[RMDB]
The record gives the reactivity of an RNA of 177 nucleotides to DMS and 2A3. Values cover nucleotides 27 to 126. The DMS profile rests on 6,526 reads. The RNA was probed in 150 mM KOAc, 10 mM MgCl2 and 150 mM bicine (pH 8.5) at 24 C. Source: RMDB library OK1LIB, as collected in RNAgym.
RNA sequence: GGGAACGACUCGAGUAGAGUCGAAAAUGUGGUGCCGCACGGGGGAGGUAUAUCACCCCAUCGUUGUCGAGGCCAUCGUAGCACAGAGAAAAGGGGUGACUGGCUCAGCACACAGCGAGCGGGACAACCUACCCAUACCAUUCGUGGUAUGGGUAGGAAAAGAAACAACAACAACAAC
Reactivity to DMS in 0.01 (KOAc 150mM, MgCl2 10mM, bicine 150mM(pH8.5), 24C), signal-to-noise 4, nucleotides 027 to 126: u030g000u020g020g030u000g040c020c020g010c050a110c100g000g000g000g010g010a090g000g030u040a080u030a180u010c060a120c000c000c000c000a240u040c050g010u000u030g000u000c020g030a180g000g010c020c040a020u020c110g030u020a040g010c040a040c060a110g000a160g010a040a010a120a120g000g010g000g010u000g000a040c080u010g000g000c000u010c050a040g040c060a130c210a050c110a050g000c000g000a050g040c020g000g000g010a080c120a080a180
Reactivity to 2A3 in 0.01 (KOAc 150mM, MgCl2 10mM, bicine 150mM(pH8.5), 24C), signal-to-noise 5, nucleotides 027 to 126: u230g020u070g020g070u070g100c020c040g010c030a040c090g000g000g010g020g010a090g000g130u130a180u050a020u180c030a160c010c010c010c000a030u040c050g060u060u080g070u080c060g010a090g030g030c010c010a060u090c050g030u050a020g040c040a010c030a050g090a010g080a100a060a050a080g000g010g010g020u010g020a040c030u020g010g000c000u010c090a040g050c050a010c030a010c000a060g030c000g040a000g000c000g010g000g000a010c010a000a030